[RMDB]
RNA sequence: GGGAACGACUCGAGUAGAGUCGAAAAGGCCUCAGAAACCACCGAGCUUUGCUUCUGCCAAUGCACUAACGCCAGCGCCCACGAACUGUUCGACCUGGAGAAUGAGGAUGAUGACCAGCUGAGCUCCGCUUGCCCGGUCCCGCUGCCCGCAGAGCCGGGAUGUAAUGACAUUCGUGUCAUUACAUCCAAAAGAAACAACAACAACAAC
Reactivity to 2A3 in 0.01 (KOAc 150mM, MgCl2 10mM, bicine 150mM(pH8.5), 24C), signal-to-noise 4, nucleotides 027 to 156: g060g020c010c010u040c020a030g090a080a110a070c010c030a020c030c010g020a020g050c000u070u110u090g010c020u060u050c020u070g030c030c010a090a110u140g010c020a050c140u150a200a030c080g020c020c010a020g010c010g010c040c030c020a040c030g060a130a040c050u080g030u100u070c050g040a060c070c000u020g040g040a060g040a100a140u100g020a050g070g010a010u080g020a040u090g050a060c050c030a010g000c020u050g020a010g050c020u040c040c000g000c030u100u070g020c010c010c030g000g030u040c010c010c000g020c010u040g050c000c000c000g040c010a010g020a000g090c020c030g030
Reactivity to DMS in 0.01 (KOAc 150mM, MgCl2 10mM, bicine 150mM(pH8.5), 24C), signal-to-noise 1, nucleotides 027 to 156: g000g000c060c030u010c060a130g000a100a150a080c060c030a110c020c020g000a150g020c060u000u000u000g020c030u000u000c040u000g000c040c040a070a090u060g010c020a080c040u000a070a100c060g020c030c000a040g000c040g010c000c000c040a080c030g020a060a100c110u000g030u010u000c050g000a050c050c000u030g010g020a140g020a070a110u010g030a120g020g000a100u000g010a090u020g000a060c050c000a100g000c050u000g000a160g010c000u010c020c010g000c030u000u000g010c020c020c030g040g010u000c020c020c030g000c040u000g000c020c010c040g010c030a080g000a110g020c030c030g000